Source: RMDB library 15KLIB, as collected in RNAgym.
This 170-nucleotide RNA was probed chemically with DMS and 2A3.
The reactions ran in a buffer of 150 mM KOAc, 10 mM MgCl2 and 150 mM bicine (pH 8.5), at 24 C.
For 2A3 the reverse transcriptase was SuperScript II with manganese.
[RMDB]
RNA sequence: GGGAACGACUCGAGUAGAGUCGAAAAAUCCCGGGGAACUCGGUAAUUCGCCCCGAAAUGAGGACUCCGGGGUCCCCUUCCGAAGGAACGGAGGGGGGUGACUAGGAAUCAGGAUCCAGUGGAUCCGUAGGUACUCAGUUCGCUGAGUACAAAAGAAACAACAACAACAAC
Reactivity to DMS in 0.01 (KOAc 150mM, MgCl2 10mM, bicine 150mM(pH8.5), 24C), signal-to-noise 9, nucleotides 027 to 129: a050u040c030c010c010g030g030g000g000a030a220c000u010c010g030g040u070a100a110u060u050c100g030c050c000c020c090g030a040a030a090u060g010a030g000g000a250c000u000c000c020g000g000g010g010u040c000c000c010c070u010u030c000c000g050a240a170g040g020a170a130c000g010g000a000g010g010g000g010g010g000u020g020a090c050u010a120g010g010a100a090u070c030a290g010g000a010u000c000c000a160g000u060g040g010a000u020c010c010g020u040a060g000
Reactivity to 2A3 in 0.01 (KOAc 150mM, MgCl2 10mM, bicine 150mM(pH8.5), 24C), signal-to-noise 9, nucleotides 027 to 129: a000u060c000c000c000g000g000g010g000a020a010c000u000c020g040g060u200a140a200u180u080c080g100c020c010c000c010g020a030a030a070u230g000a000g000g000a010c000u000c010c000g000g020g000g000u020c000c000c000c000u000u000c010c000g140a210a140g140g090a160a120c010g000g010a000g010g000g000g000g000g010u030g020a020c060u090a060g100g120a090a090u140c050a050g000g000a000u000c010c020a100g090u220g150g010a000u000c000c010g010u020a040g040